[RMDB]
Annotation:
An RNA of 177 nucleotides, treated with 2A3 and DMS and read out base by base. Reactivities are rounded to 0.1 and cut off at 0 and 3. For DMS, 1,194 sequencing reads were counted. The 2A3 profile rests on 1,914 reads. DMS adducts were read by reverse transcription with MarathonRT. Source: RMDB library TTRDEL, as collected in RNAgym.
RNA sequence: GGGAACGACUCGAGUAGAGUCGAAAAGAUAUGGAUCGGAACGCUUGGAUUUAUGGGAGGUCUCGGAAACGAGUCUCCCAUUGUCAGCGUAAUCCGAUCCUAAGUCAAACUCCUGUUCGCAGGAGAAGCAUUCAACAGAGUUCGCUCUGUUGAAUGCAAAAGAAACAACAACAACAAC
Reactivity to 2A3 in 0.01 (KOAc 150mM, MgCl2 10mM, bicine 150mM(pH8.5), 24C), signal-to-noise 1, nucleotides 027 to 126: g000a000u070a020u150g000g010a000u010c000g000g010a050a030c000g040c060u200u300g240g010a070u300u300u120a040u070g010g000g000a010g060g060u080c010u000c000g040g050a020a130a040c010g000a000g020u050c010u000c010c040c020a010u000u000g000u000c000a000g000c030g010u010a030a060u000c010c000g000a000u000c000c000u000a010a010g010u000c040a050a010a080c000u000c000c000u010g070u070u110c300g040c030a010g000g030a000g000a010a010
Reactivity to DMS in 0.01 (KOAc 150mM, MgCl2 10mM, bicine 150mM(pH8.5), 24C), signal-to-noise 1, nucleotides 027 to 126: g000a060u010a300u000g000g010a000u000c010g000g030a020a080c000g010c000u010u000g010g000a030u000u010u010a050u000g010g010g010a010g030g000u010c010u000c000g010g020a090a070a150c000g000a010g000u000c000u000c010c000c000a000u000u000g000u000c000a010g010c000g000u000a120a100u000c010c000g000a000u000c000c000u020a010a120g000u000c030a130a150a190c000u000c000c000u000g000u030u000c210g060c020a010g000g000a010g000a040a110